[RMDB]
RNA sequence: GGGAACGACUCGAGUAGAGUCGAAAAAACACCGGCUGGUUAGCAGGGCUCUUCUAUCAGCACAAAUUCAACUCUUCAGGCUGUCCUGAGAGGUUGGCCAGCUGCCGACGCCUUACCGAUUUUGCCCCAUAUGUGCCCCGUUCGCGGGGCACAUAUGAAAAGAAACAACAACAACAAC
Reactivity to 2A3 in 0.01 (KOAc 150mM, MgCl2 10mM, bicine 150mM(pH8.5), 24C), signal-to-noise 3, nucleotides 027 to 126: a000a000c100a050c020c000g030g000c030u060g000g030u120u150a020g010c030a050g060g030g000c020u020c050u170u070c030u050a100u130c020a010g070c010a030c020a110a050a040u220u080c020a020a050c040u020c020u230u090c010a030g060g020c070u100g100u300c030c010u020g010a010g010a040g080g060u020u030g020g000c010c030a030g020c020u020g000c010c000g070a120c050g010c010c010u060u080a070c030c000g070a090u040u000u020u180g060c000c010c000
Reactivity to DMS in 0.01 (KOAc 150mM, MgCl2 10mM, bicine 150mM(pH8.5), 24C), signal-to-noise 1, nucleotides 027 to 126: a110a050c090a130c050c050g000g060c030u000g000g000u030u100a110g040c100a200g040g000g040c010u050c050u000u000c000u060a090u050c060a020g000c060a120c070a040a120a060u030u000c040a110a080c000u020c060u010u000c020a050g010g000c300u000g000u080c000c000u040g030a040g040a020g030g000u000u050g000g010c100c020a050g000c070u000g000c080c010g010a030c070g070c000c000u010u050a180c050c040g010a080u000u020u020u020g000c020c030c040

Chemical mapping of a 177-nucleotide RNA with 2A3 and DMS. The 2A3 profile rests on 1,154 reads.